[RMDB]
RNA sequence: GGGAACGACUCGAGUAGAGUCGAAAACCCAAUUCUCUAAGCGAUGAGAAGCGUGUGGAAAAUUAGGGAAGGGCUACGGCUAUAAUCCUAAGAAAGCUUAUCUACAAGCGGAGGUAUUCUCAGAACGAAAACCAUUUGGCGUUCGCGCCAAAUGGAAUCAAGAAAGCUACUUCGGUAGCUUUCUUGAAAAAGAAACAACAACAACAAC
Reactivity to 2A3 in 0.01 (KOAc 150mM, MgCl2 10mM, bicine 150mM(pH8.5), 24C), signal-to-noise 2, nucleotides 027 to 156: c000c000c000a020a050u130u030c050u010c050u130a140a070g040c030g080a080u090g010a040g000a030a050g010c080g020u080g000u120g060g070a110a100a110a140u080u030a030g030g000g020a070a070g080g020g000c020u030a010c160g050g000c000u030a020u040a210a040u020c010c010u010a050a020g050a050a090a000g010c000u060u080a040u080c020u110a110c010a120a000g010c050g000g020a010g070g000u040a110u230u000c040u010c030a050g060a120a030c080g030a080a060a060a090c000c000a000u000u000u000g000g010c030g010u040u030c210g030c000g000c050c030a000a000a000u010g000g010a000a000
Reactivity to DMS in 0.01 (KOAc 150mM, MgCl2 10mM, bicine 150mM(pH8.5), 24C), signal-to-noise 1, nucleotides 027 to 156: c000c010c020a060a150u000u000c030u000c020u000a120a170g010c020g010a210u010g010a090g020a070a020g020c020g000u000g000u000g020g020a080a080a130a150u000u000a020g010g030g010a120a120g040g000g050c030u010a110c150g030g010c040u030a100u000a110a130u040c000c030u000a040a020g010a110a090a170g000c030u000u000a110u010c080u000a090c070a050a060g010c050g000g060a040g000g000u000a110u010u000c010u010c040a120g030a080a120c000g030a060a030a060a120c030c010a010u000u000u000g020g010c020g040u010u000c280g050c010g010c000c020a000a010a000u010g000g000a020a040